[RMDB]
RNA sequence: GGGAACGACUCGAGUAGAGUCGAAAACAUUGUGGGUGACGAUGUGGCGACGGCCACGAACGGCAAUGGCGGGCGCGUCGAUGUCCAGGCGCACCAAUGACGGCGUCGCCUGCACCCCGUGCAUCCACACUAUAACUCUGUUCGCAGAGUUAUAGUGAAAAGAAACAACAACAACAAC
Reactivity to 2A3 in 0.01 (KOAc 150mM, MgCl2 10mM, bicine 150mM(pH8.5), 24C), signal-to-noise 9, nucleotides 027 to 126: c060a070u170u220g020u140g020g000g020u020g020a070c060g070a140u150g040u050g100g000c030g020a120c080g190g050c010c010a030c040g030a080a010c020g050g000c060a080a210u150g130g010c070g040g050g010c070g000c010g030u040c030g050a110u140g100u100c060c050a060g030g000c010g000c010a030c020c020a030a100u150g050a030c040g000g030c010g010u070c020g000c000c000u000g000c000a020c000c010c010c000g000u030g010c000a040u020c010c000a030
Reactivity to DMS in 0.01 (KOAc 150mM, MgCl2 10mM, bicine 150mM(pH8.5), 24C), signal-to-noise 9, nucleotides 027 to 126: c070a080u000u010g060u010g010g010g020u010g010a090c080g010a120u010g030u010g010g020c000g010a090c220g010g010c010c000a070c070g010a060a090c090g010g000c090a090a080u010g000g010c090g010g010g010c040g010c020g020u000c020g010a120u010g010u010c130c110a130g010g010c040g010c020a070c030c020a080a080u000g000a120c080g010g010c010g010u010c020g010c010c000u010g000c030a040c050c070c020c020g000u000g010c050a070u000c020c030a160

The record gives the reactivity of an RNA of 177 nucleotides to 2A3 and DMS. Source: RMDB library OK2TRN, as collected in RNAgym. Values cover nucleotides 27 to 126. For DMS the reverse transcriptase was MarathonRT.